[RMDB]
RNA sequence: GGGAACGACUCGAGUAGAGUCGAAAAAUUUGUGCCCACACUGUGACAUCACAUGUUUCCUUACGGAUUUUUGCCCAGUAGAGAUGUGAGUGAUUUCUAUAACAUGGCCUCAAAGGUGGCAGUUGUGCUUCCCUGUAGGAUCCUAACCACUUUUGUAUAAAUUAUGAGGGUUCGCCCUCAUAAUUUAAAAAGAAACAACAACAACAAC
Reactivity to 2A3 in 0.01 (KOAc 150mM, MgCl2 10mM, bicine 150mM(pH8.5), 24C), signal-to-noise 3, nucleotides 027 to 156: a000u170u130u120g060u070g040c020c030c000a010c000a010c020u060g050u060g100a020c020a100u080c010a060c010a090u130g080u020u040u020c020c010u050u130a080c040g080g030a110u070u010u020u100u300g060c010c010c010a040g000u020a010g020a000g010a020u040g050u030g060a040g000u050g040a040u050u050u000c030u040a070u010a080a030c020a080u060g050g000c000c010u060c040a010a100a020g040g000u000g020g000c010a020g030u070u070g020u060g040c030u020u020c020c010c000u010g080u060a040g020g090a040u090c000c030u040a050a040c010c140a010c030u020u120u040u000g130u090a100
Reactivity to DMS in 0.01 (KOAc 150mM, MgCl2 10mM, bicine 150mM(pH8.5), 24C), signal-to-noise 3, nucleotides 027 to 156: a130u010u000u010g040u000g020c040c020c010a120c090a060c070u010g020u000g020a100c110a090u030c050a080c030a050u010g000u000u000u010c020c020u010u000a150c090g010g000a140u000u000u000u000u000g040c060c000c040a140g030u000a040g010a100g010a070u010g020u000g010a120g040u010g020a080u000u010u010c020u000a070u010a040a110c060a100u000g010g020c030c050u010c040a040a050a060g000g030u000g010g010c020a070g020u010u000g030u000g010c020u000u000c030c000c010u000g010u010a220g010g010a060u000c020c020u000a090a080c020c000a050c030u000u000u000u000g010u000a280

Description: An RNA of 207 nucleotides, treated with 2A3 and DMS and read out base by base. The reactions ran in a buffer of 150 mM KOAc, 10 mM MgCl2 and 150 mM bicine (pH 8.5), at 24 C. Source: RMDB library OK3TST, as collected in RNAgym. 2A3 adducts were read by reverse transcription with SuperScript II with manganese.